The data come from the RNA Mapping Database (RMDB), library OK3TST. This 207-nucleotide RNA was probed chemically with 2A3. The reactions ran in a buffer of 150 mM KOAc, 10 mM MgCl2 and 150 mM bicine (pH 8.5), at 24 C. Values cover nucleotides 27 to 156.
RNA sequence: GGGAACGACUCGAGUAGAGUCGAAAAUGCGUGGACAGCCGGGACAACGAUUCUGCGUCAUCGUGACACAUAACGUUGAUCAACAGCUGCGCAAUCUUGCGGCUAAAUCUUGGGUGUUUCCUAAUGAAUGUCCCAAGUGUGGUGAAGCCAAGUACCACAGCACCAUCCUAUUCGUAGGAUGGUGCUGAAAAGAAACAACAACAACAAC
Reactivity to 2A3 in 0.01 (KOAc 150mM, MgCl2 10mM, bicine 150mM(pH8.5), 24C), signal-to-noise 2, nucleotides 027 to 156: u030g020c020g000u070g070g050a100c060a050g030c090c050g150g000g000a000c000a020a000c020g200a300u010u010c010u060g000c010g010u000c010a130u180c060g250u150g020a000c000a000c000a000u050a090a000c010g000u000u000g070a300u040c000a020a060c000a040g000c000u020g000c000g000c000a000a030u070c130u070u050g060c000g020g000c010u040a000a020a240u000c000u040u000g020g000g000u050g080u060u020u070c020c010u060a170a040u100g060a030a050u130g110u210c000c000c000a070a020g020u080g050u110g060g100u090g080a120a000g010c000c040a040a000g020u020a050c000c000a020